RNA sequence: GGGAACGACUCGAGUAGAGUCGAAAAGAUAUGGACCAAGCAAGAACUAUACGCGACGAAGCAUACCACUUCGGAAACGAAGUGGUAUGCAGAGCGUAAUAAUGUUUGAUGACCUUGGUCCUAAGUCCUUGAUAUGGAUGUUCGCAUCCAUAUCAAGAAAAGAAACAACAACAACAAC
Reactivity to DMS in 0.01 (KOAc 150mM, MgCl2 10mM, bicine 150mM(pH8.5), 24C), signal-to-noise 4, nucleotides 027 to 126: g020a110u000a270u010g010g010a010c010c010a000a010g000c040a160a180g020a020a010c000u000a160u000a010c010g030c010g020a180c300g010a130a160g000c000a010u000a000c000c000a000c000u000u000c000g030g010a120a080a250c000g000a010a000g000u000g010g000u000a000u010g000c010a010g000a120g010c000g010u000a010a060u020a060a060u010g010u000u000u010g000a160u020g000a100c300c020u000u000g000g010u000c010c000u000a010a090g000u000c060
Reactivity to 2A3 in 0.01 (KOAc 150mM, MgCl2 10mM, bicine 150mM(pH8.5), 24C), signal-to-noise 3, nucleotides 027 to 126: g060a040u140a060u210g020g020a000c000c030a010a000g050c020a270a300g020a030a040c000u030a020u020a170c030g130c040g230a300c030g150a270a010g000c000a000u030a010c000c000a010c030u000u010c000g070g000a070a100a000c000g000a000a010g000u000g010g010u010a000u010g000c000a010g000a000g020c000g010u010a020a060u240a070a070u210g130u020u010u020g300a300u150g040a050c010c030u000u000g000g000u040c010c000u000a000a010g000u010c020